[RMDB]
Source: RMDB library RFMREP, as collected in RNAgym. Chemical mapping of a 177-nucleotide RNA with DMS. Values cover nucleotides 27 to 126. DMS adducts were read by reverse transcription with MarathonRT. Conditions: 150 mM KOAc, 10 mM MgCl2 and 150 mM bicine (pH 8.5), 24 C.

RNA sequence: GGGAACGACUCGAGUAGAGUCGAAAAGGGGCAGGGUGGAAAUCCCGACCGGCGGUAGUAAAGCACAUUUGCUUUAGAGCCCGUGACCCGUGUGCAUAAGCACGCGGUGGAUUCAGUUUAAGCUGAACAAGGUAAAGGACUUCGGUCCUUUACCUUGAAAAGAAACAACAACAACAAC
Reactivity to DMS in 0.01 (KOAc 150mM, MgCl2 10mM, bicine 150mM(pH8.5), 24C), signal-to-noise 1, nucleotides 027 to 126: g000g010g020g010c170a080g030g000g010u010g000g020a140a130a070u010c000c000c000g000a070c080c100g020g000c040g000g010u000a040g020u000a000a000a010g000c010a160c300a190u010u010u010g000c000u000u000u000a050g010a300g010c210c040c030g000u010g000a170c100c000c000g020u000g000u010g030c000a250u000a110a090g020c010a000c010g000c000g000g040u000g010g000a200u000u000c010a030g020u020u020u030a180a130g000c000u000g010a010a100